Conditions: 150 mM KOAc, 10 mM MgCl2 and 150 mM bicine (pH 8.5), 24 C. An RNA of 177 nucleotides, treated with DMS and 2A3 and read out base by base. 2A3 adducts were read by reverse transcription with SuperScript II with manganese. For DMS the reverse transcriptase was MarathonRT. It was measured as part of the RMDB library RFM100.
RNA sequence: GGGAACGACUCGAGUAGAGUCGAAAAAGCUACUGCUGUAAACCCACAGUUCAGGAGAUUGGGGUCAGUGGCAGCGAGCACGGCUGCGACAAAUGAUGGAUACCGCUUGGUUCCGGCGCAGAUUUCGGGAUCUCAUGAGGUUCGCCUCAUGAGAUCCAAAAGAAACAACAACAACAAC
Reactivity to DMS in 0.01 (KOAc 150mM, MgCl2 10mM, bicine 150mM(pH8.5), 24C), signal-to-noise 1, nucleotides 027 to 126: a100g000c010u040a110c010u020g010c000u000g010u010a020a110a010c000c050c030a050c030a020g000u000u000c140a140g000g010a220g000a030u000u010g010g010g000g010u030c000a140g000u080g020g000c000a000g020c040g000a050g010c000a170c220g000g000c000u000g010c000g000a080c190a060a030a050u000g000a140u080g010g000a080u000a040c000c020g110c210u090u080g010g000u000u020c010c060g050g000c030g000c020a030g000a070u040u090u050c010g100
Reactivity to 2A3 in 0.01 (KOAc 150mM, MgCl2 10mM, bicine 150mM(pH8.5), 24C), signal-to-noise 2, nucleotides 027 to 126: a000g050c030u030a020c010u000g000c000u010g000u050a020a010a020c040c040c000a300c130a070g030u070u090c020a020g000g210a190g100a110u050u010g060g000g010g000u030c000a020g000u050g020g000c010a000g000c020g030a010g020c080a030c050g020g020c000u080g000c000g070a020c070a040a210a020u100g120a020u130g070g010a030u090a090c000c000g030c150u080u140g000g000u000u000c010c000g000g000c030g000c030a010g050a120u000u020u050c010g000